Source information
The data come from the RNA Mapping Database (RMDB), library TTRDEL. An RNA of 177 nucleotides, treated with 2A3 and DMS and read out base by base. The RNA was probed in 150 mM KOAc, 10 mM MgCl2 and 150 mM bicine (pH 8.5) at 24 C.

[RMDB]
RNA sequence: GGGAACGACUCGAGUAGAGUCGAAAAGAUAUGGACUGAAUAGCAUCGAUCGUCUCUGCUUCGGAAACGAAGCAGAGGACGGGAGCUGCGUCCUAAGUCAAAACAGCCUCGCUUCGGCGAGGCUGAAGAUAUUCCACUGCUUCGGCAGUGGAAUAUCAAAAGAAACAACAACAACAAC
Reactivity to 2A3 in 0.01 (KOAc 150mM, MgCl2 10mM, bicine 150mM(pH8.5), 24C), signal-to-noise 1, nucleotides 027 to 126: g040a010u080a120u190g040g000a030c050u130g120a300a160u170a170g000c020a140u130c060g120a120u120c090g000u000c010u000c010u000g000c000u000u020c020g010g020a000a090a060c000g000a000a000g000c000a000g000a000g020g020a000c010g020g000g000a010g030c010u010g030c020g050u020c000c000u050a170a040g040u030c030a040a010a020a140c000a000g020c010c000u010c000g000c010u070u200c300g150g000c000g000a000g000g000c000u000g000a000a000
Reactivity to DMS in 0.01 (KOAc 150mM, MgCl2 10mM, bicine 150mM(pH8.5), 24C), signal-to-noise 2, nucleotides 027 to 126: g020a110u000a230u000g020g000a020c010u010g000a080a070u000a180g040c000a060u000c030g000a300u020c010g020u010c000u000c000u000g000c000u010u010c010g000g000a090a070a180c000g000a000a000g030c010a010g000a020g020g010a000c000g010g000g000a300g000c060u000g000c020g010u000c000c000u000a060a110g010u020c030a060a080a080a230c000a000g000c000c020u000c010g010c000u010u010c290g030g000c020g010a030g020g000c010u000g010a000a020